This 177-nucleotide RNA was probed chemically with DMS and 2A3. Source: RMDB library OK2TRN, as collected in RNAgym. For 2A3, 1,179 sequencing reads were counted.
[RMDB]
RNA sequence: GGGAACGACUCGAGUAGAGUCGAAAACGUAUAUAAUCGAUAUAUAUUAGCUACGUAUAGCGCAUGCCGUAUACGGCAUAUUACGGCUAGCUAUAUAGCCGAUUAGCAUAUUACGCGGCAUCGUAUAUCUGGCUUGUAAUUUCGAUUACAAGCCAGAAAAAGAAACAACAACAACAAC
Reactivity to DMS in 0.01 (KOAc 150mM, MgCl2 10mM, bicine 150mM(pH8.5), 24C), signal-to-noise 2, nucleotides 027 to 126: c060g000u010a040u000a100u020a040a040u000c030g010a110u030a130u020a020u010a040u000u000a070g020c020u000a020c080g010u000a040u000a040g060c100g020c250a000u000g000c000c000g000u000a130u010a130c170g030g000c000a020u000a050u000u020a050c030g000g000c130u000a010g000c170u010a100u000a060u000a030g010c080c000g010a040u010u000a090g010c090a120u000a110u050u000a010c080g000c010g010g010c040a050u000c120g010u000a070u020a080
Reactivity to 2A3 in 0.01 (KOAc 150mM, MgCl2 10mM, bicine 150mM(pH8.5), 24C), signal-to-noise 2, nucleotides 027 to 126: c020g020u020a050u010a000u000a120a100u110c010g000a010u010a010u020a020u000a040u300u170a020g000c020u000a020c020g050u040a030u080a160g070c060g010c030a000u010g000c000c000g080u100a080u060a240c060g050g000c020a020u030a040u060u060a010c010g000g020c030u010a000g000c070u010a020u020a010u000a220g000c010c010g050a050u080u030a020g050c040a050u160a070u160u090a070c100g040c030g020g050c020a030u090c060g020u020a040u010a020